Structure probing data (DMS) for a 177-nucleotide construct. Values cover nucleotides 27 to 126. The reactions ran in a buffer of 150 mM KOAc, 10 mM MgCl2 and 150 mM bicine (pH 8.5), at 24 C.
RNA sequence: GGGAACGACUCGAGUAGAGUCGAAAAUAAUAAUAGGAUUCAGGAGAAACAAACAUGUAACGCGCGAAGCUUUGUCUUUUAUUUCCCUUCCUGAUUCUGAAACGACUAACGGUUGCGCGCUAAAUAAGCUAUUUCUCAGAUUCGUCUGAGAAAUAGCAAAAGAAACAACAACAACAAC
Reactivity to DMS in 0.01 (KOAc 150mM, MgCl2 10mM, bicine 150mM(pH8.5), 24C), signal-to-noise 1, nucleotides 027 to 126: u000a110a040u010a090a130u000a200g000g000a050u000u000c000a010g030g020a110g000a080a140a080c150a050a170a080c170a040u030g000u000a020a090c140g020c000g010c000g010a040a070g000c070u020u020u010g010u000c000u010u000u010u000a070u000u000u000c010c000c000u000u000c000c000u000g000a000u030u000c000u000g020a060a000a030c220g040a080c010u020a030a070c050g020g040u010u020g000c020g020c010g000c040u000a020a130a070u000a070a110